[RMDB]
RNA sequence: GGGAACGACUCGAGUAGAGUCGAAAAGAUAUGGACAGGUGACAUGCUCUUUUUUGGGUUCGGAAACGAACCCGAGAGCAACAGCACCGUCCUAAGUCAAAGGUACCUAGGUUCGCCUAGGUACCAAUCCCUCAAGAGUGUUCGCACUCUUGAGGGAAAAAGAAACAACAACAACAAC
Reactivity to DMS in 0.01 (KOAc 150mM, MgCl2 10mM, bicine 150mM(pH8.5), 24C), signal-to-noise 2, nucleotides 027 to 126: g000a020u000a300u030g000g000a000c010a120g030g010u000g010a030c040a190u000g010c000u010c000u010u000u010u000u010u000g030g020g000u000u000c000g000g010a120a030a230c020g000a020a000c000c000c000g000a010g010a030g010c000a010a040c230a130g020c000a020c000c000g000u000c000c000u000a010a080g020u000c000a060a110a140g020g000u000a000c010c000u010a010g000g000u010u020c150g000c000c000u000a000g000g000u000a000c000c000a010a020